[RMDB]
RNA sequence: GGGAACGACUCGAGUAGAGUCGAAAACGGCGUUAUCUUCGAGGGUGUCAAAGUCAACAGUCACGCAGAAUGGGGUGCCGAUCUCGUCUUGUCGACGGUAACGACGACCGAUUGCACCGGAGGUGUCCCUCCUGGACAUGUUCGCAUGUCCAGGAGGAAAAGAAACAACAACAACAAC
Reactivity to DMS in 0.01 (KOAc 150mM, MgCl2 10mM, bicine 150mM(pH8.5), 24C), signal-to-noise 1, nucleotides 027 to 126: c030g050g000c010g010u000u000a070u010c040u000u000c050g000a070g000g030g030u010g010u000c060a090a140a160g040u000c060a130a070c060a020g020u000c060a090c090g030c100a060g030a070a020u000g030g000g010g010u000g020c080c020g030a110u000c050u000c060g040u000c010u010u000g000u000c040g010a050c090g010g000u020a080a100c050g000a040c050g030a110c080c040g010a060u000u000g000c070a070c050c020g000g010a070g000g020u000g010u000c060
Reactivity to 2A3 in 0.01 (KOAc 150mM, MgCl2 10mM, bicine 150mM(pH8.5), 24C), signal-to-noise 1, nucleotides 027 to 126: c010g040g000c010g030u040u040a030u070c030u060u100c020g020a070g030g060g030u060g030u090c080a120a070a080g050u070c010a000a040c030a150g050u070c030a030c080g080c000a050g050a210a100u200g030g000g020g100u100g120c100c000g040a050u000c050u030c000g000u010c010u130u130g060u060c030g000a070c030g040g030u040a070a010c030g020a010c020g000a020c030c040g160a160u070u070g020c010a010c010c000g130g070a060g020g030u080g050u070c000
The data come from the RNA Mapping Database (RMDB), library OK2TRN.
This 177-nucleotide RNA was probed chemically with DMS and 2A3.
The DMS profile rests on 1,102 reads.
Conditions: 150 mM KOAc, 10 mM MgCl2 and 150 mM bicine (pH 8.5), 24 C.